Annotation
Conditions: 150 mM KOAc, 10 mM MgCl2 and 150 mM bicine (pH 8.5), 24 C. Structure probing data (2A3 and DMS) for a 177-nucleotide construct.

RNA sequence: GGGAACGACUCGAGUAGAGUCGAAAAGUGGGUGAAGAAGGAGCCGUUCCACGCAGGACGCCAACAAGAAGAAGCCGAACCAACUUCAGGUCGCCGCGCACGCACUGGCGCUCGAUCUCCGCCGCGCCCAGAAAGGUUAGUUCGCUAACCUUUCUGGAAAAGAAACAACAACAACAAC
Reactivity to 2A3 in 0.01 (KOAc 150mM, MgCl2 10mM, bicine 150mM(pH8.5), 24C), signal-to-noise 1, nucleotides 027 to 126: g010u030g000g040g000u020g060a050a030g080a040a030g150g000a020g010c040c020g030u050u040c040c000a070c080g010c040a030g010g030a040c040g000c030c040a060a020c030a160a040g150a050a010g030a050a010g070c000c010g060a060a030c030c000a040a060c020u140u100c040a030g010g000u040c010g030c060c010g000c030g030c010a080c120g030c020a030c080u040g040g000c020g000c010u020c010g060a070u000c040u010c020c020g060c010c010g030c000g060c060
Reactivity to DMS in 0.01 (KOAc 150mM, MgCl2 10mM, bicine 150mM(pH8.5), 24C), signal-to-noise 1, nucleotides 027 to 126: g050u010g000g010g060u000g010a060a120g040a100a120g020g000a170g000c030c020g040u010u000c010c050a070c120g010c050a080g030g000a090c060g010c030c060a050a100c080a060a060g010a100a040g000a040a090g000c000c040g020a020a070c100c030a100a080c010u010u000c050a060g000g010u010c040g000c050c030g000c080g000c010a060c060g000c090a030c110u010g010g000c010g000c050u000c010g000a070u000c000u000c020c070g030c040c030g000c070g000c140
For 2A3 the reverse transcriptase was SuperScript II with manganese.